Description:
Chemical mapping of a 207-nucleotide RNA with 2A3. For 2A3 the reverse transcriptase was SuperScript II with manganese. The reactions ran in a buffer of 150 mM KOAc, 10 mM MgCl2 and 150 mM bicine (pH 8.5), at 24 C.

RNA sequence: GGGAACGACUCGAGUAGAGUCGAAAAUAGAAGUUUAACAGGUUAUCGUCGCCGCCGACUUUGUAAGGCAGAACCUUAGCGGCUGGAACUUGCUCUUUGUACUCCUCGACCGCUUCACGCAGUGCCUUUAACAUUUCUUCAUAUUCAGGCGCGGAGCCAAACUGGCGACAUUCGUGUCGCCAGUUUGAAAAGAAACAACAACAACAAC
Reactivity to 2A3 in 0.01 (KOAc 150mM, MgCl2 10mM, bicine 150mM(pH8.5), 24C), signal-to-noise 1, nucleotides 027 to 156: u180a030g130a140a080g040u160u110u160a190a090c070a050g060g000u100u020a180u240c050g110u050c060g030c030c050g000c010c000g070a150c060u010u090u060g110u070a140a000g000g030c000a050g010a150a060c020c010u000u010a010g000c000g000g000c030u040g010g050a050a000c000u150u080g030c010u110c020u080u040u110g020u050a080c010u000c020c000u060c020g060a140c090c000g060c040u030u090c100a110c130g100c010a060g020u030g000c000c000u070u100u060a170a000c050a210u120u190u020c120u130u140c030a070u140a220u300u170c040a000g020g000c010g000c020g030g010a000g030c000